[RMDB]
RNA sequence: GGGAACGACUCGAGUAGAGUCGAAAAGAUAUGGACAUGUGGCGGGAGCUGGCCGUCGGAAACGACGGUGCAGCGAAGAACGAAUCAUGUCCUAAGUCAAAGUUCGAUGAGUUCGCUCAUCGAACAAGCUCUACUUUUAGUUCGCUAAAAGUAGAGCAAAAGAAACAACAACAACAAC
Reactivity to 2A3 in 0.01 (KOAc 150mM, MgCl2 10mM, bicine 150mM(pH8.5), 24C), signal-to-noise 4, nucleotides 027 to 126: g010a000u020a000u050g000g000a000c000a000u020g050u120g170g300c130g050g020g020a170g000c010u000g000g010c010c000g000u000c000g000g020a070a000a000c000g000a000c000g010g050u230g160c010a000g010c020g010a040a020g040a020a010c010g000a010a060u110c010a000u010g000u000c000c000u000a010a000g000u000c020a150a080a060g000u000u000c000g000a000u000g000a010g020u030u090c250g040c080u000c000a000u000c000g000a000a000c000a000a000
Reactivity to DMS in 0.01 (KOAc 150mM, MgCl2 10mM, bicine 150mM(pH8.5), 24C), signal-to-noise 4, nucleotides 027 to 126: g010a010u000a030u010g000g000a020c000a000u000g000u000g020g020c050g020g010g000a100g040c000u000g000g000c000c000g010u000c000g020g000a000a010a030c000g000a010c000g000g020u000g000c000a000g000c010g020a070a120g010a140a100c010g010a160a080u010c000a000u000g000u000c000c000u000a000a050g000u000c000a110a120a120g000u000u000c000g000a010u000g000a010g010u000u010c240g010c000u000c010a000u000c000g000a010a000c010a060a100